This 207-nucleotide RNA was probed chemically with 2A3 and DMS.
2A3 adducts were read by reverse transcription with SuperScript II with manganese.
The RNA was probed in 150 mM KOAc, 10 mM MgCl2 and 150 mM bicine (pH 8.5) at 24 C.
The data come from the RNA Mapping Database (RMDB), library OK3TST.

RNA sequence: GGGAACGACUCGAGUAGAGUCGAAAAUGUAUUACUUUAAGGGUCACAAGUGCAUUCACAUCUGUUACUGCAUUUGAUCUAGAGGAUUUUCUAAUGAAAGAAAGCAGGAUUCUGAGGCCACUUCAAUGGUGGAAGGGAAAGAGUGUGGCUGGGACUAGGAUAUAUCAUCCUUCGGGAUGAUAUAUCCAAAAGAAACAACAACAACAAC
Reactivity to 2A3 in 0.01 (KOAc 150mM, MgCl2 10mM, bicine 150mM(pH8.5), 24C), signal-to-noise 2, nucleotides 027 to 156: u080g030u030a170u130u070a120c050u090u040u140a140a070g040g000g000u050c010a020c020a050a050g000u030g030c010a040u000u130c090a010c020a110u120c070u090g050u140u050a050c040u000g030c000a020u020u020u080g010a020u010c040u050a040g010a020g130g020a010u050u050u090u070c050u140a120a120u120g080a060a070a060g010a050a040a000g020c010a010g030g050a070u150u060c070u140g030a110g050g060c030c000a030c010u140u110c130a080a200u140g010g030u030g020g040a050a010g050g030g000a000a170a000g020a030g020u080g010u010g020g040c070u050g010g020g020a010c030u030a090
Reactivity to DMS in 0.01 (KOAc 150mM, MgCl2 10mM, bicine 150mM(pH8.5), 24C), signal-to-noise 1, nucleotides 027 to 156: u000g000u010a120u000u000a050c040u000u000u000a090a090g000g020g000u000c020a110c030a080a070g020u020g010c010a050u020u000c090a060c030a230u000c090u070g020u000u000a070c100u000g000c000a140u000u000u010g010a170u010c040u010a140g000a140g030g000a220u000u020u000u000c070u000a150a060u000g010a130a060a110g000a050a010a090g030c060a080g010g000a140u000u000c020u020g020a120g010g030c010c010a040c020u010u000c040a080a060u020g030g050u010g000g000a080a000g010g020g010a000a060a100g010a060g020u000g030u030g010g020c030u000g060g000g010a140c080u000a200